[RMDB]
RNA sequence: GGGAACGACUCGAGUAGAGUCGAAAAGGGUCCGCUGUUCCAUUCUUUCUUACCUUGUGGCCGGCAUGGUCCCAGCCUCCUCGCUGGCGCCGGCUGGGCAACAUUCCGAGGGGACCGUCCCUCGGUACAACAGAUCAGAGUUCGCUCUGAUCUGUUGAAAAGAAACAACAACAACAAC
Reactivity to DMS in 0.01 (KOAc 150mM, MgCl2 10mM, bicine 150mM(pH8.5), 24C), signal-to-noise 2, nucleotides 027 to 126: g000g010g010u000c010c050g050c050u010g000u000u000c020c020a080u010u000c090u000u000u000c070u010u020a100c120c070u010u010g010u010g000g020c050c000g000g000c020a150u000g060g020u000c300c010c000a010g010c000c080u020c070c050u030c160g020c020u010g000g020c230g010c020c000g000g000c020u000g000g030g010c060a050a050c120a110u000u000c010c000g020a010g010g000g010g000a140c200c230g000u000c000c000c000u010c000g000g000u000a060
Reactivity to 2A3 in 0.01 (KOAc 150mM, MgCl2 10mM, bicine 150mM(pH8.5), 24C), signal-to-noise 1, nucleotides 027 to 126: g050g020g010u050c000c000g000c050u060g030u080u010c030c010a060u090u030c010u090u100u000c010u130u130a080c030c020u050u090g070u090g070g100c000c010g010g000c050a120u120g060g010u080c060c000c000a000g040c000c000u080c040c000u060c070g020c020u030g030g000c020g040c010c020g000g090c000u050g000g000g060c020a020a010c000a070u200u000c000c030g000a000g020g010g040g040a110c100c000g220u230c000c000c000u000c010g000g000u000a010

An RNA of 177 nucleotides, treated with DMS and 2A3 and read out base by base. The 2A3 profile rests on 962 reads. For 2A3 the reverse transcriptase was SuperScript II with manganese. The DMS profile rests on 1,412 reads. For DMS the reverse transcriptase was MarathonRT.